[RMDB]
RNA sequence: GGGAACGACUCGAGUAGAGUCGAAAAGAUAUGGAAUGACAAGCUUUUGACGCGUCCGUCUCGGAAACGAGAUAGGACGCGAUAAGCUUGCAUUCCUAAGUCAAAGCCCAGGGUUCGCCCUGGGCAACAGUCCUAUAAGCUUCGGCUUAUAGGACUGAAAAGAAACAACAACAACAAC
Reactivity to DMS in 0.01 (KOAc 150mM, MgCl2 10mM, bicine 150mM(pH8.5), 24C), signal-to-noise 2, nucleotides 027 to 126: g010a020u010a270u000g010g000a000a000u000g000a200c000a030a030g000c000u010u000u010u030g020a220c110g020c000g000u000c000c010g010u000c000u010c000g000g000a040a020a150c000g020a000g000a010u000a050g070g000a000c010g030c000g010a020u010a030a010g000c000u000u000g000c020a010u000u000c000c000u000a010a080g000u000c030a110a130a160g010c000c000c000a010g000g000g010u000u030c300g000c000c010c020u000g030g000g020c000a000a010
Reactivity to 2A3 in 0.01 (KOAc 150mM, MgCl2 10mM, bicine 150mM(pH8.5), 24C), signal-to-noise 3, nucleotides 027 to 126: g010a010u030a020u100g010g030a010a000u040g080a270c010a010a010g010c030u160u220u300u300g260a190c250g000c000g000u000c000c000g020u000c000u000c000g020g010a050a030a030c000g020a020g010a010u070a150g000g000a000c000g000c000g000a010u000a000a010g000c000u010u000g020c000a000u000u000c000c000u010a030a000g030u010c030a030a120a060g010c010c000c000a000g000g010g000u020u180c300g150c010c000c000u000g000g020g000c000a010a000
An RNA of 177 nucleotides, treated with DMS and 2A3 and read out base by base. The RNA was probed in 150 mM KOAc, 10 mM MgCl2 and 150 mM bicine (pH 8.5) at 24 C. DMS adducts were read by reverse transcription with MarathonRT. The 2A3 profile rests on 5,685 reads.